[RMDB]
RNA sequence: GGGAACGACUCGAGUAGAGUCGAAAAGAUCUACAAGUGCGGUGGUAUUGACAAACGUACGAUCGAGAAGUUCGAGAAAGAAGCUGCCGACAUUGGUAAGGCCUCAUUCAAGUACGCAUGGGUGCUGACCAGCUAUACGUUUCGACGUAUAGCUGGUAAAAGAAACAACAACAACAAC
Reactivity to 2A3 in 0.01 (KOAc 150mM, MgCl2 10mM, bicine 150mM(pH8.5), 24C), signal-to-noise 4, nucleotides 027 to 126: g020a020u020c000u010a000c000a070a070g010u040g030c010g010g030u070g040g060u110a200u160u250g130a070c040a080a160a000c030g000u020a020c030g030a030u030c000g000a010g020a070a010g030u040u010c030g020a020g080a070a090a020g060a030a010g000c000u040g000c000c000g060a190c110a150u070u150g040g000u100a100a060g060g000c000c010u000c000a040u080u050c040a100a000g050u010a070c050g050c080a040u030g040g000g020u150g010c000u010g040
Reactivity to DMS in 0.01 (KOAc 150mM, MgCl2 10mM, bicine 150mM(pH8.5), 24C), signal-to-noise 4, nucleotides 027 to 126: g000a050u000c000u020a050c010a090a130g020u000g000c020g010g010u000g000g030u020a110u050u040g010a060c120a030a080a100c050g000u010a000c010g030a300u010c030g000a030g000a210a250g000u020u010c040g020a100g020a060a090a110g000a060a110g030c020u000g010c050c020g010a100c170a090u010u000g000g000u010a070a070g020g000c010c010u010c020a060u010u010c080a050a160g000u020a050c090g020c130a060u020g000g010g020u010g010c020u000g010